[RMDB]
RNA sequence: GGGAACGACUCGAGUAGAGUCGAAAACGCUAUAGAUUCGUCUAUAGCGACUCCUACCCGCCGGCCGGUGCGCGCGGUAGGUGACGCAAACCACCGUGCGUAAUGUACUGGUUUUCGAACCAGUAAAAGUCAAGUGAUUAUUCGUAAUCACUUGACUAAAAGAAACAACAACAACAAC
Reactivity to 2A3 in 0.01 (KOAc 150mM, MgCl2 10mM, bicine 150mM(pH8.5), 24C), signal-to-noise 5, nucleotides 027 to 126: c000g000c000u010a010u010a010g010a020u030u040c170g030u000c110u000a000u000a000g000c000g000a000c010u000c000c000u010a090c010c010c010g040c020c010g100g010c040c030g020g040u030g020c010g000c000g000c010g020g000u060a220g050g000u020g070a070c150g000c200a090a070a010c000c010a000c010c000g000u000g000c000g020u030a050a030u110g020u030a000c000u000g000g010u000u010u030u050c160g070a000a000c000c000a010g000u020a010a140a000
Reactivity to DMS in 0.01 (KOAc 150mM, MgCl2 10mM, bicine 150mM(pH8.5), 24C), signal-to-noise 6, nucleotides 027 to 126: c010g010c000u000a000u000a000g010a030u000u010c170g020u000c000u000a000u000a000g010c000g000a050c130u000c030c010u000a140c060c030c020g000c070c040g000g010c040c050g000g010u000g010c020g010c010g020c010g010g010u000a060g030g010u000g010a090c200g010c270a060a110a040c010c000a040c010c000g010u000g000c000g020u000a030a040u010g000u000a020c010u000g000g000u000u000u000u010c130g010a020a020c000c000a000g000u000a020a060a090